Chemical mapping of a 170-nucleotide RNA with 2A3 and DMS. It was measured as part of the RMDB library 15KLIB.
[RMDB]
RNA sequence: GGGAACGACUCGAGUAGAGUCGAAAACGAGAGUUGGGAGACAGAAAGAGGGCGAGUGAUCUCGGAAGGAAUCCCCCAAGCUGCCAACAGAGGAAGAAACAAGACAGAGGAGCCCCCAUGACGCUGGAAACCUCGUAGUUCGCUACGAGGAAAAGAAACAACAACAACAAC
Reactivity to 2A3 in 0.01 (KOAc 150mM, MgCl2 10mM, bicine 150mM(pH8.5), 24C), signal-to-noise 6, nucleotides 027 to 129: c030g030a020g010a020g040u050u060g020g010g010a050g020a020c050a040g060a030a110a000g040a060g010g030g020c030g020a030g040u140g030a070u030c030u030c040g000g020a020a010g020g020a020a060u060c000c000c000c000c000a020a020g030c070u060g030c030c020a050a040c040a080g070a000g010g020a000a010g000a010a040a010c040a030a030g080a010c020a010g040a020g020g000a010g010c020c010c010c010c010a050u100g010a030c040g020c060u050g000g000a050a060a060
Reactivity to DMS in 0.01 (KOAc 150mM, MgCl2 10mM, bicine 150mM(pH8.5), 24C), signal-to-noise 9, nucleotides 027 to 129: c080g020a080g010a060g010u010u010g010g000g040a100g000a080c090a070g030a070a070a060g020a020g010g050g050c080g000a010g020u030g020a070u040c020u020c050g000g040a070a020g010g010a070a070u050c090c030c000c050c080a080a080g000c130u080g000c050c070a070a070c190a090g030a070g010g000a060a030g000a040a040a050c080a020a010g020a060c140a050g030a030g000g000a070g000c050c010c000c030c030a060u030g000a060c140g020c050u050g000g000a080a070a100
Overview:
For DMS the reverse transcriptase was MarathonRT.